Source: RMDB library OK3TST, as collected in RNAgym. Structure probing data (DMS) for a 207-nucleotide construct. The reactions ran in a buffer of 150 mM KOAc, 10 mM MgCl2 and 150 mM bicine (pH 8.5), at 24 C. The DMS profile rests on 1,994 reads.
RNA sequence: GGGAACGACUCGAGUAGAGUCGAAAACAACGGCAACUUCAAGUUCAAUACGGCCGGGCCAUACAUCCUGAAUGCCCUGUUUUACAGUGACGACAACAUCACAGGUUUGGCUCUCGGGUCAAACGCCGCAGAUGUGCACGGGACGGACCAACAGUACUACACCCGUCAAAUUCGUUUGACGGGUGUAAAAAGAAACAACAACAACAAC
Reactivity to DMS in 0.01 (KOAc 150mM, MgCl2 10mM, bicine 150mM(pH8.5), 24C), signal-to-noise 1, nucleotides 027 to 156: c030a120a120c030g020g000c030a020a030c050u000u000c050a090a180g000u000u000c100a040a180u010a070c000g010g010c000c020g020g020g000c040c070a150u050a090c070a090u020c010c020u000g030a110a150u010g020c000c070c120u010g000u000u000u010u000a100c040a090g050u000g000a120c020g000a230c040a040a000c020a060u010c010a070c040a060g000g030u000u000u000g010g000c040u000c010u030c190g050g070g020u010c000a010a040a050c010g000c040c000g040c040a150g010a020u010g000u000g000c070a060c080g000g030g010a060c020g010g000a030c040c000a000a080c000a140g060u010a100c040